[RMDB]
RNA sequence: GGGAACGACUCGAGUAGAGUCGAAAAACAAGCAAAAUUCGCCCCAGGGAACUAUGCCUUGCUGUGGAGUUAUGCAAUGGGUGUCGGAGUUACUCUUGACAGAGCAAUGAACAAUCUAAAUUACAUGGAUAUCGAAGGAUUUCGAUCCUUCGAUAUCAAAAGAAACAACAACAACAAC
Reactivity to DMS in 0.01 (KOAc 150mM, MgCl2 10mM, bicine 150mM(pH8.5), 24C), signal-to-noise 4, nucleotides 027 to 126: a080c110a110a080g010c060a060a060a070a110u000u000c080g020c020c010c040c030a050g000g010g020a070a090c160u010a090u000g000c040c030u000u010g020c050u010g030u010g020g010a060g020u000u010a070u010g020c030a060a050u000g000g000g000u000g020u000c040g010g000a160g000u000u000a050c050u000c000u000u010g030a110c150a070g010a060g020c040a030a050u010g020a110a100c140a060a050u000c080u000a050a070a090u000u000a070c140a100u000g010
Reactivity to 2A3 in 0.01 (KOAc 150mM, MgCl2 10mM, bicine 150mM(pH8.5), 24C), signal-to-noise 3, nucleotides 027 to 126: a020c040a030a020g050c030a090a020a050a190u100u070c050g050c000c000c000c000a000g000g000g050a020a080c070u050a070u220g030c010c010u040u060g060c040u040g040u060g080g000a070g020u080u060a050u070g010c000a060a100u080g050g000g000u070g070u080c020g010g010a030g020u070u100a060c030u010c030u070u140g020a030c040a030g030a010g000c030a040a080u130g010a080a030c030a040a050u040c030u200a100a140a120u150u100a030c050a120u160g100